[RMDB]
RNA sequence: GGGAACGACUCGAGUAGAGUCGAAAAAGCUGGAGGCCAUUAUCCUUAGCAACCUAACACGGGAACAGAAAACAAAAUACCACGUGUUCUUGCUUGUAAGUGGGAGCUAAGUGAUGAGAACACAUGGCAAGAACGGUCAGUUCGCUGACCGUUCUUGAAAAGAAACAACAACAACAAC
Reactivity to DMS in 0.01 (KOAc 150mM, MgCl2 10mM, bicine 150mM(pH8.5), 24C), signal-to-noise 2, nucleotides 027 to 126: a150g000c100u000g010g010a070g020g010c060c090a140u000u010a030u000c000c000u000u020a010g020c010a040a300c000c010u000a060a060c010a010c000g000g020g000a040a000c060a080g000a150a030a070a150c210a120a060a070a050u000a120c090c130a070c100g020u000g000u000u010c020u000u000g010c080u010u010g010u000a020a020g010u010g000g010g010a300g000c000u010a010a000g030u030g010a040u000g000a040g000a030a050c080a060c110a060u000g000g010
Reactivity to 2A3 in 0.01 (KOAc 150mM, MgCl2 10mM, bicine 150mM(pH8.5), 24C), signal-to-noise 1, nucleotides 027 to 126: a000g130c130u160g110g010a050g020g100c010c010a050u080u080a000u090c000c000u000u030a000g020c000a010a080c000c020u010a000a060c030a000c030g050g000g000a040a000c050a020g220a070a120a030a000c160a050a070a050a030u120a120c010c070a120c180g010u020g000u020u000c000u020u070g030c060u030u070g010u080a190a120g090u070g060g000g000a030g000c010u040a020a020g040u090g210a070u010g000a020g040a050a000c040a010c010a100u100g060g000